[RMDB]
RNA sequence: GGGAACGACUCGAGUAGAGUCGAAAAUCUUGCUUCGAAACACCAUCGAUCGUCCCUUCUUCUUUUACCUUCUCCUGGCUCUUCGAGUGAGACGCGACCGGUGGCAUCACCUCUCGGUUCGUCUUCCAACCUGCUUUUUGUCUAUCUGAGCCUCUGCGCCAAGUUAAGUGUUCGCACUUAACUUGGCAAAAGAAACAACAACAACAAC
Reactivity to 2A3 in 0.01 (KOAc 150mM, MgCl2 10mM, bicine 150mM(pH8.5), 24C), signal-to-noise 2, nucleotides 027 to 156: u110c050u070u170g080c040u040u040c010g030a000a000a120c060a050c060c000a000u000c020g020a030u040c030g040u000c000c000c000u030u090c040u040u050c010u020u160u040u210a130c020c020u080u070c040u130c000c000u000g000g000c030u010c030u070u080c060g040a040g060u040g030a030g010a000c020g020c040g020a020c000c000g020g010u000g010g030c040a110u130c050a040c020c000u010c030u120c040g010g000u030u020c000g040u010c000u060u040c040c010a040a040c000c010u030g110c090u100u120u030u100u180g100u020c030u030a140u020c040u050g010a010g010c000c000u010c020u030g010c000
Source information: This 207-nucleotide RNA was probed chemically with 2A3. Values are in units of 0.01, from 0 to 300, in steps of 10. Conditions: 150 mM KOAc, 10 mM MgCl2 and 150 mM bicine (pH 8.5), 24 C. Reactivities are given for positions 27 through 156.